[RMDB]
An RNA of 207 nucleotides, treated with 2A3 and read out base by base. 2A3 adducts were read by reverse transcription with SuperScript II with manganese. The reactions ran in a buffer of 150 mM KOAc, 10 mM MgCl2 and 150 mM bicine (pH 8.5), at 24 C.
RNA sequence: GGGAACGACUCGAGUAGAGUCGAAAAGGGGUCUUCACAUCGAUCUUCUUUCUAAGCUUGGAUUUAUGGCUGAAGCCUCCACGGCCAUUGUCAGCUUAGGGAAGGGAGUGAAGACGGAGGCACCCAAAACAUCGAAGACGUUCGCGUCUUCGAUGAAUCUAGUUUUUACCUUCGGGUAAAAACUAGAAAAAGAAACAACAACAACAAC
Reactivity to 2A3 in 0.01 (KOAc 150mM, MgCl2 10mM, bicine 150mM(pH8.5), 24C), signal-to-noise 3, nucleotides 027 to 156: g130g020g030g000u010c000u010u000c000a010c010a300u190c050g160a150u050c000u050u000c010u060u220u090c020u020a000a030g010c030u140u280g180g000a070u300u300u100a020u110g000g000c000u020g010a090a020g010c000c010u010c010c010a010c000g000g000c000c010a010u020u020g020u030c090a030g000c010u000u000a010g000g030g010a010a020g050g010g000a020g000u000g000a000a000g000a000c000g010g000a000g010g010c020a040c000c010c000a030a130a010a020c000a000u010c000g000a010a000g000a000c010g050u080u090c260g070c010g120u000c000u000u000c000g000a000u000g000a000a010